The record gives the reactivity of an RNA of 207 nucleotides to DMS and 2A3.
RNA sequence: GGGAACGACUCGAGUAGAGUCGAAAAUAAUGCUCAAAACUGGUUUGAGCCUCCAGAUUGGUAUGGAGACGAAAGAGUUGGAAUUGGUUUCAACGGCAGAGUCGAAUAUGUAGACGUACAAAAUCUAAAUCCACCGGAAAAUAUGAGAAAAAAGAGACGAUAUGAUACAGUUCGCUGUAUCAUAUCGAAAAGAAACAACAACAACAAC
Reactivity to DMS in 0.01 (KOAc 150mM, MgCl2 10mM, bicine 150mM(pH8.5), 24C), signal-to-noise 2, nucleotides 027 to 156: u010a060a090u010g010c000u010c030a010a080a120a180c110u020g030g030u020u000u010g010a180g040c030c020u020c000c020a050g010a290u000u010g070g030u000a070u000g010g010a090g020a090c030g000a120a150a120g010a090g000u000u000g010g000a090a140u000u000g020g010u000u000u000c000a060a080c050g000g010c010a050g010a190g000u000c030g020a100a110u000a090u000g010u000a080g000a070c060g000u000a180c100a060a020a070a060u000c040u000a010a080a060u000c020c020a050c080c020g020g000a080a050a090a070u000a060u000g000a110g020a010a050a080a060a050a160g010a150g020a150
Reactivity to 2A3 in 0.01 (KOAc 150mM, MgCl2 10mM, bicine 150mM(pH8.5), 24C), signal-to-noise 4, nucleotides 027 to 156: u060a000a060u090g010c000u000c060a060a050a060a080c110u130g070g040u030u020u030g020a000g000c000c010u000c010c000a030g050a200u100u210g020g010u080a060u050g020g000a010g000a010c040g050a070a090a040g100a030g000u060u060g020g030a080a080u070u080g070g000u050u020u040c030a010a000c000g040g020c060a020g020a010g090u040c030g040a090a070u080a070u170g080u040a020g010a040c020g020u040a020c050a010a150a020a030u010c020u070a030a040a040u000c030c020a030c060c050g070g060a070a050a050a010u230a090u090g030a100g060a070a110a020a030a010a010g070a020g010a040
DMS adducts were read by reverse transcription with MarathonRT. It was measured as part of the RMDB library OK3TST. Reactivities are rounded to 0.1 and cut off at 0 and 3. The 2A3 profile rests on 2,460 reads. The RNA was probed in 150 mM KOAc, 10 mM MgCl2 and 150 mM bicine (pH 8.5) at 24 C.